[RMDB]
RNA sequence: GGGAACGACUCGAGUAGAGUCGAAAAUGCACUUCCCUAAACCGGAAGCUAACCUUCGCCUUCACGACCUUCCCUUGCAGAGCAACUAGCAUAUAAUCGUGAUGCAUUGAUGCCGCGGCAUGGAAAGAAUGUGACUACCUUUCGAGGUAGUCACAUUAAAAGAAACAACAACAACAAC
Reactivity to DMS in 0.01 (KOAc 150mM, MgCl2 10mM, bicine 150mM(pH8.5), 24C), signal-to-noise 4, nucleotides 027 to 126: u020g020c120a130c120u010u000c000c000c010u000a040a090a150c230c190g000g000a050a040g010c060u000a060a070c040c030u020u010c060g000c000c040u010u020c020a060c050g010a080c070c040u000u010c010c000c010u010u000g020c060a050g000a140g010c080a100a060c080u010a080g000c030a040u020a070u020a100a140u050c060g000u010g010a140u000g000c030a080u020u000g010a070u000g000c030c030g040c090g000g030c020a030u010g030g000a080a070a160g000
Reactivity to 2A3 in 0.01 (KOAc 150mM, MgCl2 10mM, bicine 150mM(pH8.5), 24C), signal-to-noise 6, nucleotides 027 to 126: u130g010c040a030c100u010u020c010c000c000u020a060a060a060c020c020g040g010a050a010g020c040u040a050a050c010c000u050u050c050g040c010c010u060u060c040a010c050g050a040c010c020u040u030c000c010c000u000u070g000c030a030g020a030g100c010a040a070c040u090a050g040c030a060u110a020u090a150a110u110c050g080u090g050a040u040g010c010a040u010u160g040a030u070g030c020c020g040c040g060g010c040a050u080g030g070a080a050a040g130